[RMDB]
RNA sequence: GGGAACGACUCGAGUAGAGUCGAAAACAUUCACAAAUCAGAGCAACAAGUUAACUGGUGGUUGGCUAAGGUCCUAGCCUUGAAGCUGAUUCUAUCUUUACACAUUCCUUUAAGCCAUAAACUUAGACAGUGGGUCAGCAGCUGUUUUUACACACACCACCCAGCGUAUUUUCGAAUACGCUGGGUGAAAAGAAACAACAACAACAAC
Reactivity to 2A3 in 0.01 (KOAc 150mM, MgCl2 10mM, bicine 150mM(pH8.5), 24C), signal-to-noise 2, nucleotides 027 to 156: c010a050u140u160c070a040c050a120a080a070u110c060a120g030a000g100c050a040a070c030a140a000g070u110u160a120a110c090u050g100g000u010g000g020u140u080g010g000c040u010a040a080g030g010u020c000c010u010a010g020c000c000u000u060g030a020a000g000c010u000g030a040u130u030c000u030a130u020c040u040u110u130a060c090a010c010a070u060u100c040c020u080u040u040a070a010g000c010c000a110u190a070a100a000c010u000u000a010g080a050c000a040g030u030g030g050g000u010c030a020g010c000a010g010c050u010g040u020u010u000u020u030a040c050a000c020a000c000a030c070